RNA sequence: GGGAACGACUCGAGUAGAGUCGAAAAACACACAUAUUCGUAUGUGUGUCGCUAGUCCCGCUGGUGUAAUGGAUAGCAUACGAUCCUUCUAAGUUUGCGGUCCUGGUUCGAUCCCAGGGCGGGAUACCAAUGUAGACGUCGAAUUCGUUCGACGUAAUAGAUUAUAGCGUUUCGACGCUAUAAUCUAAAAAGAAACAACAACAACAAC
Reactivity to 2A3 in 0.01 (KOAc 150mM, MgCl2 10mM, bicine 150mM(pH8.5), 24C), signal-to-noise 3, nucleotides 027 to 156: a000c000a000c000a000c010a000u010a040u030u120c230g110u090a000u000g000u000g000u000g000u000c010g050c140u080a030g050u020c000c000c010g000c020u030g000g010u010g000u020a030a080u150g100g190a230u090a060g010c010a000u010a010c010g020a040u050c030c050u130u180c120u150a160a170g000u020u030u040g040c010g000g000u010c000c000u000g000g010u010u020c000g010a010u000c010c000c000a020g000g020g010c000g000g010g000a040u050a070c030c010a040a040u190g050u110a100g040a130c000g000u020c000g030a010a030u110u070c140g050u160u000c000g020a000c000g000u020a000a020
Reactivity to DMS in 0.01 (KOAc 150mM, MgCl2 10mM, bicine 150mM(pH8.5), 24C), signal-to-noise 4, nucleotides 027 to 156: a030c010a000c000a010c020a000u000a020u000u000c290g050u000a000u000g020u010g030u000g020u000c020g030c090u000a150g020u000c010c000c000g030c000u000g000g020u020g000u000a030a080u000g020g010a190u000a060g040c020a020u000a080c020g010a070u010c020c070u000u000c200u000a090a160g010u000u000u010g020c120g020g010u000c000c010u000g010g010u000u000c030g010a300u000c060c010c010a050g030g020g050c010g030g000g000a050u000a060c030c020a060a130u000g020u000a090g010a040c000g020u000c010g030a040a100u000u000c270g020u000u000c000g020a000c020g000u000a030a120